[RMDB]
Chemical mapping of a 177-nucleotide RNA with DMS and 2A3. Conditions: 150 mM KOAc, 10 mM MgCl2 and 150 mM bicine (pH 8.5), 24 C. It was measured as part of the RMDB libraries RFM100 and RFMREP.

RNA sequence: GGGAACGACUCGAGUAGAGUCGAAAAGCGUGAGCCGUGUUAACCGAACGCGACAGGGAUGAUGAACACAGGGGUUUUUUCGGUUUCACCCUGUGGCCGACGAAUUGGCAGGCGAGCGUCCCACCUGGAACUAGUGUAGCUUCGGCUACACUAGUUCAAAAGAAACAACAACAACAAC
Reactivity to DMS in 0.01 (KOAc 150mM, MgCl2 10mM, bicine 150mM(pH8.5), 24C), signal-to-noise 2, nucleotides 027 to 126: g010c000g000u050g010a300g040c040c040g000u040g050u000u030a020a020c100c020g000a060a270c300g010c050g030a060c000a020g000g000g000a210u020g000a120u050g000a120a040c140a080c100a110g000g000g000g090u000u000u010u000u050u040c010g010g000u000u000u020c050a040c000c000c010u000g000u010g000g040c020c030g100a300c140g010a060a280u010u000g000g000c020a150g000g010c000g020a240g000c060g000u010c000c000c020a110c200c150u000g050
Reactivity to 2A3 in 0.01 (KOAc 150mM, MgCl2 10mM, bicine 150mM(pH8.5), 24C), signal-to-noise 5, nucleotides 027 to 126: g010c000g020u040g000a010g020c020c040g190u080g020u040u020a030a000c020c010g000a020a020c020g010c020g130a000c010a020g050g030g060a160u050g020a040u080g060a080a010c120a020c100a190g110g050g000g000u100u120u040u030u110u150c030g030g000u030u020u030c010a010c000c010c000u000g000u000g070g000c000c010g030a050c010g010a060a100u050u010g000g000c000a000g000g000c000g010a020g010c000g030u130c010c000c000a030c010c040u110g120
Source information
Values cover nucleotides 27 to 126.